[RMDB]
RNA sequence: GGGAACGACUCGAGUAGAGUCGAAAAGCCGUACGAUCCGAUCUGAUGCAGUAUACGAUCUCUAUGCUACGUACCUGAUCCAGGCCGAUCUAGCUGAUCGCUAGUACGAUCACGGCCGGCCAGCGCGAUACUAACUUUAAUUCGUUAAAGUUAGUAUAAAAGAAACAACAACAACAAC
Reactivity to DMS in 0.01 (KOAc 150mM, MgCl2 10mM, bicine 150mM(pH8.5), 24C), signal-to-noise 9, nucleotides 027 to 126: g010c040c020g020u000a070c120g010a070u000c050c050g010a070u000c040u000g010a100u000g010c040a050g010u000a090u000a110c120g010a070u000c060u000c070u000a060u010g010c050u000a060c060g010u000a060c120c030u000g000a060u000c050c070a120g010g010c040c010g010a050u000c020u000a080g040c180u000g000a040u000c070g010c030u010a100g010u010a100c050g000a030u000c020a040c030g000g000c090c010g010g010c030c010a080g010c110g010c120g010
Reactivity to 2A3 in 0.01 (KOAc 150mM, MgCl2 10mM, bicine 150mM(pH8.5), 24C), signal-to-noise 9, nucleotides 027 to 126: g030c010c010g010u040a040c050g020a050u020c050c020g020a040u000c030u070g030a080u100g060c040a020g060u090a050u020a130c090g040a150u030c060u000c030u100a070u150g040c020u040a050c030g040u030a060c000c020u030g020a050u020c040c020a060g010g000c010c010g000a020u020c030u060a040g040c080u030g040a060u040c030g000c020u040a040g030u130a090c030g000a000u020c010a000c030g010g000c000c000g000g000c000c000a040g030c090g010c030g040
Structure probing data (DMS and 2A3) for a 177-nucleotide construct. The RNA was probed in 150 mM KOAc, 10 mM MgCl2 and 150 mM bicine (pH 8.5) at 24 C. 2A3 adducts were read by reverse transcription with SuperScript II with manganese. For 2A3, 82,391 sequencing reads were counted. For DMS, 110,750 sequencing reads were counted.